[RMDB]
RNA sequence: GGGAACGACUCGAGUAGAGUCGAAAAGCUGGUAUGCGAUUGUUUAGCGUCCUUCAAGAUGAUUGGGCUGCUCUCAGUGCAUCUAGGCGUUCUCGCGGACUUGGCGAUGAUAGUAAGAUUAAGGCUAGGCGACUAUGCCAUUCGUGGCAUAGUCGCCAAAAGAAACAACAACAACAAC
Reactivity to 2A3 in 0.01 (KOAc 150mM, MgCl2 10mM, bicine 150mM(pH8.5), 24C), signal-to-noise 1, nucleotides 027 to 126: g030c010u000g040g030u210a050u020g030c120g120a190u070u090g060u080u040u130a040g000c010g010u000c010c030u090u070c050a080a170g160a300u210g080a090u010u060g050g030g000c060u100g000c030u040c000u010c040a040g000u050g030c000a000u050c020u070a040g000g080c030g000u000u030c000u010c010g000c050g060g000a120c030u050u080g030g000c050g030a000u040g030a060u110a080g120u080a030a100g000a110u060u080a130a060g090g000c110u030a010